[RMDB]
RNA sequence: GGGAACGACUCGAGUAGAGUCGAAAACGCUGGCAAGAAUUCUGCAGCAAGCCGGCAUUCAGGAUGAUGCCAAGGAAGUGGUGUUCUUCGGUGCCGACACGGCGACCGAAGAAAUCCGUGGACGCGACUCAGAAGGGUAAUUCGUUACCCUUCUGAGAAAAGAAACAACAACAACAAC
Reactivity to DMS in 0.01 (KOAc 150mM, MgCl2 10mM, bicine 150mM(pH8.5), 24C), signal-to-noise 6, nucleotides 027 to 126: c110g010c060u010g000g020c020a070a110g010a280a070u010u010c030u010g020c210a080g000c070a090a140g020c120c100g000g030c040a080u010u010c040a050g000g010a060u000g000a300u000g000c000c010a050a120g000g000a150a110g010u000g000g000u000g000u010u000c010u000u000c000g010g010u000g010c010c000g000a170c260a100c100g010g000c010g010a020c000c000g010a010a010g010a010a050a040u000c020c030g020u010g010g010a150c090g000c080g000a230
Reactivity to 2A3 in 0.01 (KOAc 150mM, MgCl2 10mM, bicine 150mM(pH8.5), 24C), signal-to-noise 3, nucleotides 027 to 126: c030g000c050u050g060g010c020a040a030g060a250a270u180u040c040u090g040c010a030g020c020a020a030g090c060c030g050g010c020a030u070u070c030a020g090g010a050u080g000a020u050g020c010c020a040a070g100g020a070a030g040u040g040g020u060g080u060u010c010u010u020c010g000g010u010g000c000c010g130a170c090a060c300g000g000c050g140a040c000c000g000a010a000g000a000a000a000u000c000c000g010u030g000g020a010c040g000c030g100a040